[RMDB]
Chemical mapping of a 207-nucleotide RNA with 2A3 and DMS. It was measured as part of the RMDB library OK3TST.

RNA sequence: GGGAACGACUCGAGUAGAGUCGAAAAUCCCAAAGGUUGCCGAAUCCGAAAGGUUUGGAGGAACCGCUUUUUGGGGUUAAUCUGCAGUGAAGCUGCAGUAGGGAUACCUUCUGUCCCGCACCCGACAGCUAACUCCCGAGGCAAUAAAGGAAGGAGACAUAUGACUCCUAUUCGUAGGAGUCAUAUGAAAAGAAACAACAACAACAAC
Reactivity to 2A3 in 0.01 (KOAc 150mM, MgCl2 10mM, bicine 150mM(pH8.5), 24C), signal-to-noise 4, nucleotides 027 to 156: u000c000c000c000a010a040a010g040g010u020u030g000c010c010g040a050a070u070c020c010g060a070a050a040g030g000u050u040u060g030g000a030g000g040a090a070c100c020g000c010u150u140u020u080u160g020g000g000g000u010u030a060a030u060c000u010g000c000a010g010u070g250a210a030g180c000u000g000c000a000g000u010a010g010g010g010a000u060a100c010c000u020u020c010u030g000u000c020c010c000g000c010a060c000c000c010g030a080c070a010g000c010u030a070a020c010u010c000c010c020g060a050g010g010c030a010a010u130a120a050a020g000g010a010a000g010g020a050g030a020
Reactivity to DMS in 0.01 (KOAc 150mM, MgCl2 10mM, bicine 150mM(pH8.5), 24C), signal-to-noise 4, nucleotides 027 to 156: u000c000c000c000a060a130a090g030g030u000u000g000c000c030g020a100a140u000c020c020g000a170a160a220g030g010u000u000u000g010g000a150g030g000a080a110c040c060g010c090u000u000u000u020u010g010g010g010g000u000u000a050a110u000c000u000g020c020a040g050u010g020a210a150g000c000u010g000c000a030g010u000a050g020g000g010a060u000a060c040c060u000u000c030u000g000u000c130c000c000g000c060a090c020c020c000g010a070c080a060g020c030u000a150a150c020u000c000c000c030g010a160g020g010c020a100a090u010a040a060a110g000g000a080a050g010g020a300g000a190